[RMDB]
RNA sequence: GGGAACGACUCGAGUAGAGUCGAAAAUUAGAAUGUCUACAAUAUGCUCAUGAAAAUGGUUGUCCUUGGAAUGAAGAUACAUGUACGAAUGCAGCAAAAAAUGGACAAUUAAAAUGUUUAAAAUAUGGAUAAGGGCUAGUUUCGACUAGCCCUUAUCAAAAGAAACAACAACAACAAC
Reactivity to DMS in 0.01 (KOAc 150mM, MgCl2 10mM, bicine 150mM(pH8.5), 24C), signal-to-noise 1, nucleotides 027 to 126: u010u020a180g010a210a060u010g000u000c010u010a070c160a040a090u000a060u010g000c030u000c010a040u010g010a080a040a090a020u000g010g030u000u020g030u000c010c030u000u000g000g000a180a040u000g000a080a040g000a050u000a030c040a070u000g010u030a050c120g000a130a040u000g020c170a020g050c000a000a000a120a070a140a200u000g000g000a040c040a030a050u030u000a000a030a070a120u000g000u000u010u000a020a020a090a130u000a090u020g000

Annotation:
Chemical mapping of a 177-nucleotide RNA with DMS. For DMS the reverse transcriptase was MarathonRT. For DMS, 657 sequencing reads were counted. The reactions ran in a buffer of 150 mM KOAc, 10 mM MgCl2 and 150 mM bicine (pH 8.5), at 24 C.